[RMDB]
RNA sequence: GGGAACGACUCGAGUAGAGUCGAAAAGCUCUGCGAGACAGAUCGAACAACAAAGAGAGAUCGAAAAUCUUAGAGGAGAGAACGAAUCUGUUGACUUCACUAGGACAUUGUCGAUCAGAGGUCCAAAGUGCAUUCAUGGGUUCGCCUAUGGAUGCACAAAAGAAACAACAACAACAAC
Reactivity to DMS in 0.01 (KOAc 150mM, MgCl2 10mM, bicine 150mM(pH8.5), 24C), signal-to-noise 9, nucleotides 027 to 126: g010c020u000c000u000g000c040g020a300g020a020c030a070g000a020u010c010g010a290a240c040a060a100c290a070a130a120g000a050g000a300g000a010u010c010g000a080a080a100a220u000c000u010u000a010g000a090g010g000a020g010a110g020a030a020c010g010a140a090u050c140u050g020u000u000g010a040c000u000u000c000a110c000u000a010g000g010a010c120a080u020u000g010u010c000g000a190u000c010a020g000a020g000g000u010c020c030a040a090a130
Reactivity to 2A3 in 0.01 (KOAc 150mM, MgCl2 10mM, bicine 150mM(pH8.5), 24C), signal-to-noise 9, nucleotides 027 to 126: g020c000u000c000u000g010c030g020a030g000a010c020a020g020a020u010c020g060a070a060c030a080a030c040a040a300a010g100a010g000a010g000a010u010c020g040a050a050a020a050u000c000u010u010a010g000a040g030g010a010g000a010g030a020a010c020g050a100a200u140c130u210g030u020u030g120a050c000u000u000c000a000c020u000a000g000g010a010c020a130u060u140g020u010c000g000a010u020c010a000g010a010g020g030u000c000c000a030a060a020